Structure probing data (2A3) for a 207-nucleotide construct. The reactions ran in a buffer of 150 mM KOAc, 10 mM MgCl2 and 150 mM bicine (pH 8.5), at 24 C.

RNA sequence: GGGAACGACUCGAGUAGAGUCGAAAAGGAUUUGACAGCGGGCAGAAAUGGUAGGUAAGCAUGCAGUGGGUCGGUAAUUUCCACUUAAAUCUCAGUUAUCAAAACUUUAUCUGGCGAAACUAAUUACGCUCUUGCUGCUUAAUCGAAUCACAGUAGACUAACCACCGAUGUUCGCAUCGGUGGUUAGAAAAGAAACAACAACAACAAC
Reactivity to 2A3 in 0.01 (KOAc 150mM, MgCl2 10mM, bicine 150mM(pH8.5), 24C), signal-to-noise 2, nucleotides 027 to 156: g030g040a110u100u050u160g030a050c030a020g010c000g000g000g020c010a000g080a060a120a020u150g060g030u030a030g040g040u070a020a000g000c050a060u130g000c030a030g030u030g000g010g010u090c090g040g000u020a040a020u020u080u040c010c070a060c020u130u100a050a070a090u070c080u000c060a010g010u040u050a050u100c000a010a000a080a180c070u070u180u130a120u070c030u050g010g000c090g040a080a010a000c030u070a010a070u030u040a010c070g010c000u000c000u000u100g020c010u000g000c000u060u060a060a020u050c010g020a040a000u050c020a020c000a030g080u070a010g070a020